[RMDB]
RNA sequence: GGGAACGACUCGAGUAGAGUCGAAAACUAAGACAGUGCUGACGUCGACAACGUCUUAGAAAGCCAACCUUCAAAGACAGCCGUGACGUCAACACCGUCUUUGAAGCCUGGUUUUCUAAGACGGUCGCAUUGAACAGGUGUUCGCACCUGUUCAAUGAAAAGAAACAACAACAACAAC
Reactivity to 2A3 in 0.01 (KOAc 150mM, MgCl2 10mM, bicine 150mM(pH8.5), 24C), signal-to-noise 4, nucleotides 027 to 126: c020u050a050a060g120a080c070a080g070u080g120c050u100g060a070c040g050u060c020g040a010c020a170a090c020g000u000c000u000u010a000g000a010a000a000g020c000c000a020a020c020c000u010u010c000a000a000a010g000a000c020a020g130c160c090g030u050g060a160c100g150u130c040a050a000c000a000c010c010g010u000c000u010u010u000g000a010a000g000c010c020u030g000g010u010u010u010u000c000u010a000a010g000a000c010g020g000u020c030g000
Reactivity to DMS in 0.01 (KOAc 150mM, MgCl2 10mM, bicine 150mM(pH8.5), 24C), signal-to-noise 5, nucleotides 027 to 126: c030u000a090a080g010a090c120a070g010u000g010c070u000g020a070c110g020u000c020g010a040c080a110a170c030g010u000c000u000u000a020g000a010a010a010g010c010c010a020a060c210c000u000u000c010a010a010a020g010a010c010a070g030c160c200g010u000g000a090c190g010u010c180a070a100c020a040c020c040g000u000c000u000u000u000g000a000a010g010c210c080u000g010g000u000u000u000u000c010u000a000a030g010a010c000g020g000u000c050g010